Source information
This 177-nucleotide RNA was probed chemically with 2A3 and DMS. Conditions: 150 mM KOAc, 10 mM MgCl2 and 150 mM bicine (pH 8.5), 24 C. For DMS the reverse transcriptase was MarathonRT.
RNA sequence: GGGAACGACUCGAGUAGAGUCGAAAAAUGGUUGCACAACCGGUGCUAAAAACGCUCGGAGCGCCAGUUGCCACAACAGAUGUGGUGGCAGAUGAAGUCGGCCGACCAUCAACGUCUCCGUUGGCCGCCGUGCACAAUCAUUCGUGAUUGUGCACGGAAAAGAAACAACAACAACAAC
Reactivity to 2A3 in 0.01 (KOAc 150mM, MgCl2 10mM, bicine 150mM(pH8.5), 24C), signal-to-noise 2, nucleotides 027 to 126: a010u080g030g000u070u300g020c000a030c020a130a140c000c010g010g080u110g000c000u030a180a040a050a130a040c060g030c010u010c030g010g050a010g010c030g020c040c000a000g030u060u050g000c000c000a010c010a070a120c060a080g250a300u300g010u050g100g000u000g020g040c010a000g000a050u100g050a050a030g070u060c010g010g020c000c010g010a020c020c010a040u090c030a030a090c060g080u070c060u080c070c020g000u010u070g000g000c000c000g000
Reactivity to DMS in 0.01 (KOAc 150mM, MgCl2 10mM, bicine 150mM(pH8.5), 24C), signal-to-noise 2, nucleotides 027 to 126: a070u000g020g000u000u030g050c030a070c090a190a130c010c020g000g010u010g000c020u010a030a090a070a090a190c100g000c030u020c020g010g030a050g040c050g000c020c000a060g010u010u000g010c000c010a000c000a080a060c050a150g000a170u000g020u000g020g040u000g030g020c000a010g010a060u000g000a070a060g000u000c000g020g030c030c020g010a010c050c040a070u000c010a090a100c200g000u010c040u000c050c160g020u000u020g010g000c000c050g000